RNA sequence: GGGAACGACUCGAGUAGAGUCGAAAAGUGCGGAGUGAAAUUCAUAGGCGCCCCGCCAAUUUGGCGCAACGACCCGGUACUCCGCGUAGUCGCGACGUAAACGUUCUGUGUUGGCGUUCAGGCCUCACGAUGAUCAUCGAUUCGUCGAUGAUCAUCGAAAAGAAACAACAACAACAAC
Reactivity to DMS in 0.01 (KOAc 150mM, MgCl2 10mM, bicine 150mM(pH8.5), 24C), signal-to-noise 3, nucleotides 027 to 126: g010u000g010c040g040g000a020g000u010g010a100a050a100u020u000c160a130u000a170g010g000c030g040c070c000c200c080g010c060c080a050a060u010u020u030g000g000c000g030c080a080a140c130g000a100c050c000c050g000g020u020a010c020u010c020c010g000c020g010u040a030g020u000c050g000c010g010a060c020g000u030a040a090a080c050g000u010u000c070u040g010u000g000u020u010g000g010c120g000u000u010c120a080g000g030c010c000u020c040a160
Reactivity to 2A3 in 0.01 (KOAc 150mM, MgCl2 10mM, bicine 150mM(pH8.5), 24C), signal-to-noise 2, nucleotides 027 to 126: g140u120g010c000g030g000a010g020u040g070a090a120a210u120u170c090a100u160a160g120g000c000g000c000c020c010c000g070c010c000a040a080u200u090u300g020g000c020g020c000a000a000c010g080a110c000c010c000g040g090u060a040c000u000c000c020g000c010g010u020a020g020u020c030g000c040g080a050c030g030u000a000a140a000c010g040u060u000c040u050g040u000g020u050u110g030g000c000g010u040u070c040a060g070g050c030c000u030c020a010